[RMDB]
RNA sequence: GGGAACGACUCGAGUAGAGUCGAAAAGGCCUUUAGUCUUGCCGACCGAAACGACCGCGGCAAGUGAACAGAUGUACCGCCCCAUAACCCUGGGUUAAGGGUGCCGGACGCGUGUCGUUCAGCGCGAAUAAUACGGGUCAUUCGUGACCCGUAUUAUAAAAGAAACAACAACAACAAC
Reactivity to DMS in 0.01 (KOAc 150mM, MgCl2 10mM, bicine 150mM(pH8.5), 24C), signal-to-noise 5, nucleotides 027 to 126: g010g010c030c030u000u000u010a150g010u010c020u000u000g000c040c020g010a090c140c050g000a070a100a090c100g000a060c070c050g010c010g000g010c040a040a050g020u010g000a070a090c150a140g010a090u010g000u000a100c010c020g010c030c000c000c010a070u000a050a030c020c000c140u000g020g010g020u000u000a040a060g000g010g000u000g010c110c050g020g000a120c030g000c050g010u000g000u010c030g010u000u010c040a160g020c070g020c060g000a200
Reactivity to 2A3 in 0.01 (KOAc 150mM, MgCl2 10mM, bicine 150mM(pH8.5), 24C), signal-to-noise 2, nucleotides 027 to 126: g050g050c000c000u070u070u140a050g050u030c010u000u010g010c000c000g050a100c000c040g090a220a110a030c050g090a070c020c080g030c010g000g010c050a060a020g020u030g070a090a030c040a080g150a200u160g060u130a100c000c000g020c000c020c000c010a020u010a030a020c020c010c120u190g100g020g080u010u020a040a040g050g000g020u020g050c100c020g020g030a010c050g050c020g030u120g020u050c030g000u000u030c010a030g030c020g020c010g050a040

Conditions: 150 mM KOAc, 10 mM MgCl2 and 150 mM bicine (pH 8.5), 24 C.
This 177-nucleotide RNA was probed chemically with DMS and 2A3.
The DMS profile rests on 6,232 reads.
2A3 adducts were read by reverse transcription with SuperScript II with manganese.
The data come from the RNA Mapping Database (RMDB), library OK2TST.
DMS adducts were read by reverse transcription with MarathonRT.